[RMDB]
Description
This 207-nucleotide RNA was probed chemically with 2A3 and DMS. Conditions: 150 mM KOAc, 10 mM MgCl2 and 150 mM bicine (pH 8.5), 24 C. The 2A3 profile rests on 1,570 reads. For 2A3 the reverse transcriptase was SuperScript II with manganese. For DMS the reverse transcriptase was MarathonRT.
RNA sequence: GGGAACGACUCGAGUAGAGUCGAAAAUACCGUCUUCUCCCCGACGGUUUCAAUCCAUAGCUUCACAUUGUGUAGCGUAGGUGGAAGGUAUCGUGUGGUGUAUAAACACCACAUAGUCUCUUAGGGGUCAAGCUGAUAAACUUCGGUUUAUCAGCAACUGACAAUUAGCCUUCGGGCUAAUUGUCAGAAAAGAAACAACAACAACAAC
Reactivity to 2A3 in 0.01 (KOAc 150mM, MgCl2 10mM, bicine 150mM(pH8.5), 24C), signal-to-noise 3, nucleotides 027 to 156: u040a000c010c010g030u010c010u220u010c040u130c020c000c010c010g000a000c000g010g000u030u020u020c040a020a030u000c010c040a070u050a100g000c010u030u090c010a040c040a270u250u300g010u010g030u040a010g010c000g110u100a070g110g070u020g020g020a040a010g080g020u100a060u230c050g000u010g000u000g030g020u000g070u010a070u100a300a300a010c010a000c000c000a000c000a000u010a000g010u000c000u000c010u120u150a010g000g000g000g000u040c050a010a070g000c010u010g000a000u010a000a000a000c000u060u100c140g050g000u010u000u000a000u000c000a000g000c000a000a000
Reactivity to DMS in 0.01 (KOAc 150mM, MgCl2 10mM, bicine 150mM(pH8.5), 24C), signal-to-noise 1, nucleotides 027 to 156: u000a070c040c010g020u030c010u000u010c040u000c010c000c000c150g000a050c030g020g030u020u000u000c080a130a170u000c010c020a070u000a180g010c010u020u010c000a020c020a300u000u000g000u020g050u020a130g050c010g000u000a030g030g050u000g030g020a080a150g020g010u000a040u000c090g040u020g030u000g040g060u010g000u000a180u010a290a180a070c000a000c010c000a000c000a010u000a040g000u010c050u000c050u000u000a240g000g020g050g000u010c070a070a190g000c020u000g000a010u000a010a000a030c000u000u010c300g070g000u000u010u000a000u000c000a010g020c000a000a060